Chemical mapping of a 177-nucleotide RNA with DMS and 2A3.

RNA sequence: GGGAACGACUCGAGUAGAGUCGAAAAGGGAGAAGACGGCGUCUCCAAGCCCAGGAGAGAGGCCUCAGGAGGAACCAGCCCUGCCCACACCUGGAUCUCAGACCUCCAGCCUCCAGGGCUGUGGGAGCGUCAUCAGCCACUUCGGUGGCUGAUGACGAAAAGAAACAACAACAACAAC
Reactivity to DMS in 0.01 (KOAc 150mM, MgCl2 10mM, bicine 150mM(pH8.5), 24C), signal-to-noise 1, nucleotides 027 to 126: g000g000g060a110g010a110a040g000a170c110g000g000c040g000u030c020u020c010c000a130a040g000c100c000c010a090g070g020a030g000a210g030a060g000g050c050c120u000c300a120g000g000a020g010g030a300a080c050c000a050g000c000c000c010u020g000c060c010c020a070c100a070c100c000u060g000g000a040u000c030u120c130a140g040a210c020c000u000c000c000a130g000c040c000u030c020c100a280g000g000g000c010u000g020u000g020g000g000a130g000
Reactivity to 2A3 in 0.01 (KOAc 150mM, MgCl2 10mM, bicine 150mM(pH8.5), 24C), signal-to-noise 2, nucleotides 027 to 126: g030g000g010a080g050a030a050g110a020c060g020g000c010g080u000c000u000c020c000a000a020g000c000c000c000a000g150g000a080g010a020g000a000g000g000c000c130u160c100a060g000g020a000g010g040a000a080c000c000a030g010c060c000c000u080g060c020c000c010a020c020a010c000c020u010g030g030a050u100c040u010c080a090g090a240c000c020u010c000c010a000g020c000c010u000c000c000a020g040g020g000c040u220g230u060g240g020g000a070g040

Overview
2A3 adducts were read by reverse transcription with SuperScript II with manganese. The data come from the RNA Mapping Database (RMDB), library OK1LIB.